[RMDB]
RNA sequence: GGGAACGACUCGAGUAGAGUCGAAAAAGAUCGUGGGUUGCCUGGCUUCGACGGGGAGUCGAAGAUCGGACCGAAGGGAGAGACAGGGAGCCCUGGAAGAGAUGGAAUCCCCGGCGCAAGAGGACCAUACGGUAUUAUCCUUCGGGAUAAUACCGUAAAAAGAAACAACAACAACAAC
Reactivity to DMS in 0.01 (KOAc 150mM, MgCl2 10mM, bicine 150mM(pH8.5), 24C), signal-to-noise 2, nucleotides 027 to 126: a070g010a080u010c050g030u030g000g020g040u000u000g020c040c010u000g020g030c010u000u000c000g030a120c040g000g010g010g000a200g000u000c000g030a070a020g000a070u000c050g000g000a140c040c060g000a150a130g000g010g010a100g020a070g000a110c040a030g020g000g000a080g010c040c010c000u000g040g000a090a070g010a110g010a090u010g010g010a120a110u000c060c010c000c030g000g000c090g000c090a050a100g010a060g010g030a090c120c090a180